This 177-nucleotide RNA was probed chemically with DMS and 2A3. DMS adducts were read by reverse transcription with MarathonRT. For 2A3 the reverse transcriptase was SuperScript II with manganese. For DMS, 12,710 sequencing reads were counted. Source: RMDB library RFMREP, as collected in RNAgym.
RNA sequence: GGGAACGACUCGAGUAGAGUCGAAAAGGGGUGGAGCCGUCGAUGAGACACCGCCCACCUCCAGCUGUGGAGCUAACUCCCGCUGGGAGGACAUCGGUAGGUGGGCAGUUUGGGUGGGGCGCCACUCGUUGAUGUAAUAGUUCGCUAUUACAUCAACAAAAGAAACAACAACAACAAC
Reactivity to DMS in 0.01 (KOAc 150mM, MgCl2 10mM, bicine 150mM(pH8.5), 24C), signal-to-noise 7, nucleotides 027 to 126: g000g010g010g010u000g010g000a060g010c040c080g010u000c060g010a140u000g000a260g000a080c080a110c070c050g010c000c000c010a010c010c000u000c010c000a070g010c020u000g020u020g020g000a030g010c090u010a110a230c000u010c000c000c010g010c170u010g010g010g000a020g010g000a070c110a040u010c150g000g010u010a030g000g010u000g000g000g020c020a040g000u000u000u010g010g010g000u010g000g000g000g010c060g000c020c010a030c060u000c070
Reactivity to 2A3 in 0.01 (KOAc 150mM, MgCl2 10mM, bicine 150mM(pH8.5), 24C), signal-to-noise 9, nucleotides 027 to 126: g040g000g010g010u090g010g020a020g030c030c020g110u090c040g070a140u200g090a030g010a030c020a010c030c030g000c000c000c000a000c000c000u000c000c000a010g000c020u120g060u300g240g170a030g000c030u090a110a120c010u010c000c010c070g080c130u190g010g010g010a040g020g030a030c010a080u120c060g040g050u160a030g000g000u020g000g000g000c010a020g010u060u120u100g090g000g020u220g010g030g000g010c020g010c010c000a030c010u040c050